[RMDB]
RNA sequence: GGGAACGACUCGAGUAGAGUCGAAAACGGGCGCAAGUGAAAUACCACUACUUUUAACGUUAUUUUACUUAUUCCGUGGGUCGGAAGCGGGGCAUCGCCCCUCCUUUUGGCUCUAAGGCCCGGCCUUACUCGAUAUAAUGUUCGCAUUAUAUCGAGUAAAAGAAACAACAACAACAAC
Reactivity to DMS in 0.01 (KOAc 150mM, MgCl2 10mM, bicine 150mM(pH8.5), 24C), signal-to-noise 5, nucleotides 027 to 126: c020g010g020g020c040g030c230a020a010g000u000g000a010a010a010u000a020c050c070a140c120u020a130c220u020u010u010u000a050a190c140g000u000u000a010u000u000u000u000a000c000u000u000a170u020u010c100c080g010u000g000g000g030u000c000g010g000a010a010g040c300g000g010g000g020c010a070u010c300g030c030c000c000c000u000c120c000u000u000u010u000g000g000c000u010c000u020a080a080g010g000c010c000c000g000g000c050c030u000u000
Reactivity to 2A3 in 0.01 (KOAc 150mM, MgCl2 10mM, bicine 150mM(pH8.5), 24C), signal-to-noise 5, nucleotides 027 to 126: c000g000g010g000c070g020c090a020a000g000u010g010a000a010a010u030a010c030c040a050c070u160a100c040u160u210u180u300a150a040c040g010u010u010a010u000u000u000u000a010c010u040u040a050u200u100c080c050g060u060g000g010g010u000c000g000g010a000a000g000c040g000g000g020g000c030a060u210c190g030c010c000c000c010u040c010c010u010u020u000u010g000g000c000u000c000u040a100a030g120g000c020c010c000g010g000c000c000u000u010